An RNA of 177 nucleotides, treated with DMS and read out base by base. The reactions ran in a buffer of 150 mM KOAc, 10 mM MgCl2 and 150 mM bicine (pH 8.5), at 24 C.

RNA sequence: GGGAACGACUCGAGUAGAGUCGAAAAGAUAUGGACAUAGGGUGUCGACUUGGAUUUAUCGGAAACGAUUGUCAGUCGCACCUAUGUCCUAAGUCGGAACCAAGCGGAUGUUCGCAUCCGCUUGGAACUCCCUCAAAUGGUUCGCCAUUUGAGGGAGAAAAGAAACAACAACAACAAC
Reactivity to DMS in 0.01 (KOAc 150mM, MgCl2 10mM, bicine 150mM(pH8.5), 24C), signal-to-noise 1, nucleotides 027 to 126: g000a030u000a300u000g010g000a020c010a000u000a020g030g000g000u000g030u020c020g000a010c000u020u020g040g010a020u010u000u000a000u000c020g000g020a100a110a180c030g030a000u000u010g010u010c000a030g000u000c020g010c010a000c000c000u000a000u000g020u000c000c010u000a000a070g000u020c010g000g000a120a200c000c000a000a020g000c000g000g020a050u000g020u000u010c240g030c000a000u000c000c000g000c000u000u000g010g010a030a040
The DMS profile rests on 1,376 reads.